[RMDB]
RNA sequence: GGGAACGACUCGAGUAGAGUCGAAAAGAUAUGGAUCCGUAGGGAGCGAGACAUCGGAAACGAUGUGUCGCGAAGAACUAUAGGAUCCUAAGUCAAAGUUUUUCCCUUGUUCGCAAGGGAAAAACAACAUUCCUGUAAUGUUCGCAUUACAGGAAUGAAAAGAAACAACAACAACAAC
Reactivity to DMS in 0.01 (KOAc 150mM, MgCl2 10mM, bicine 150mM(pH8.5), 24C), signal-to-noise 6, nucleotides 027 to 126: g000a020u000a060u020g000g000a000u000c000c000g020u000a010g000g010g010a030g020c000g000a030g000a010c000a000u010c000g010g000a020a010a040c000g020a010u000g000u000g000u000c000g030c000g010a070a120g010a160a290c000u000a010u010a120g050g000a010u000c000c000u000a010a090g000u000c010a110a130a180g000u000u000u000u000u000c000c000c010u000u000g000u000u010c260g020c000a010a010g010g010g000a000a000a000a000a000c010a170a250
Reactivity to 2A3 in 0.01 (KOAc 150mM, MgCl2 10mM, bicine 150mM(pH8.5), 24C), signal-to-noise 3, nucleotides 027 to 126: g010a000u020a000u080g000g000a000u000c000c010g000u010a010g020g020g030a070g010c010g000a010g010a000c000a000u010c010g010g000a010a000a000c010g000a010u010g010u020g170u020c010g000c000g000a030a010g000a000a000c010u020a020u120a280g000g020a000u010c000c000u000a010a000g000u000c030a110a070a160g010u000u000u010u000u000c010c000c000u010u000g130u030u070c300g010c120a000a000g020g000g020a000a000a020a000a000c000a000a010
Conditions: 150 mM KOAc, 10 mM MgCl2 and 150 mM bicine (pH 8.5), 24 C. This 177-nucleotide RNA was probed chemically with DMS and 2A3. The 2A3 profile rests on 26,908 reads. The DMS profile rests on 14,451 reads. Reactivities are rounded to 0.1 and cut off at 0 and 3. It was measured as part of the RMDB library TTRDES.